[RMDB]
RNA sequence: GGGAACGACUCGAGUAGAGUCGAAAAUCGUACGUCGUAACAGAGCCUCUGAAUUCCACGGUCUACCUCAACCUGAUUUCCCAGUAAGGGAACUCAUGACUAUUCGAGUCCUAGACGGGAAAACAAAACGCUACAAGAGUCAAAAGGCACUCGCGGAUACUUGCCCUAAAUUCGUUUAGGGCAAGUAAAAAGAAACAACAACAACAAC
Reactivity to 2A3 in 0.01 (KOAc 150mM, MgCl2 10mM, bicine 150mM(pH8.5), 24C), signal-to-noise 3, nucleotides 027 to 156: u100c010g030u060a030c020g030u030c010g000u030a080a040c020a100g030a020g060c000c020u050c040u040g100a070a060u110u010c010c020a060c090g040g020u000c000u020a060c020c040u070c030a020a030c010c020u030g050a070u010u020u040c000c000c020a000g070u090a070a180g000g010g020a010a060c000u000c000a040u100g110a050c070u100a150u140u130c040g010a000g010u000c000c000u020a030g030a060c000g000g000g000a000a020a010a000c020a000a090a010a000c040g020c000u100a040c090a130a010g010a000g020u020c030a010a020a060a140g050g000c060a010c020u010c000g060c010g040g010a010
Reactivity to DMS in 0.01 (KOAc 150mM, MgCl2 10mM, bicine 150mM(pH8.5), 24C), signal-to-noise 2, nucleotides 027 to 156: u010c040g030u000a020c060g030u000c040g000u000a110a140c050a120g010a120g030c030c010u000c070u000g020a080a250u000u000c010c010a100c040g000g020u000c000u000a090c030c020u000c060a050a090c050c030u000g000a150u000u000u000c000c010c030a130g010u040a200a170g020g020g010a040a030c050u000c020a090u000g010a110c130u000a140u010u000c070g020a060g000u000c020c010u000a090g010a090c090g000g010g020a050a030a060a140c090a050a070a040a030c020g020c000u000a060c050a050a160g000a050g000u000c050a110a080a070a060g000g020c010a080c070u000c020g020c050g000g000a300